The record gives the reactivity of an RNA of 177 nucleotides to DMS and 2A3. The reactions ran in a buffer of 150 mM KOAc, 10 mM MgCl2 and 150 mM bicine (pH 8.5), at 24 C. Reactivities are given for positions 27 through 126. Source: RMDB library OK2TRN, as collected in RNAgym. The 2A3 profile rests on 9,031 reads. High 2A3 reactivity points to a flexible backbone, as in loops and unpaired stretches.
[RMDB]
RNA sequence: GGGAACGACUCGAGUAGAGUCGAAAAACUUCACUGGUGACAACCUGAUGGUUCUGAUUCAGAAGGGCCAGGAGAUCGCCCUGGGACGGAUGCACCUGAACAGCCUGCCAGCCCGUGAGGGUCUGCACCCUCUGAAUAGUUUCGACUAUUCAGAGGGAAAAGAAACAACAACAACAAC
Reactivity to DMS in 0.01 (KOAc 150mM, MgCl2 10mM, bicine 150mM(pH8.5), 24C), signal-to-noise 7, nucleotides 027 to 126: a070c050u000u010c030a060c040u010g000g030u000g020a100c110a090a100c050c030u000g010a110u010g020g010u010u010c050u000g000a140u010u010c090a070g010a160a080g010g000g000c000c030a050g000g010a130g000a080u010c130g010c050c010c020u010g010g010g010a070c120g010g000a080u000g010c090a060c050c020u000g010a060a080c080a060g000c200c030u000g010c050c040a090g010c020c020c020g000u000g000a110g000g000g000u010c030u000g010c180a210
Reactivity to 2A3 in 0.01 (KOAc 150mM, MgCl2 10mM, bicine 150mM(pH8.5), 24C), signal-to-noise 4, nucleotides 027 to 126: a000c030u090u040c040a030c070u040g010g020u050g080a060c030a070a100c030c020u090g070a130u080g050g040u130u050c060u090g160a300u070u090c030a050g040a110a050g100g030g020c000c020a020g030g040a050g030a090u130c060g040c000c000c010u050g010g020g020a040c030g030g000a040u100g040c040a050c050c010u010g030a060a020c010a020g010c010c010u040g030c010c020a020g000c020c000c010g020u040g030a070g020g000g010u030c010u050g030c030a080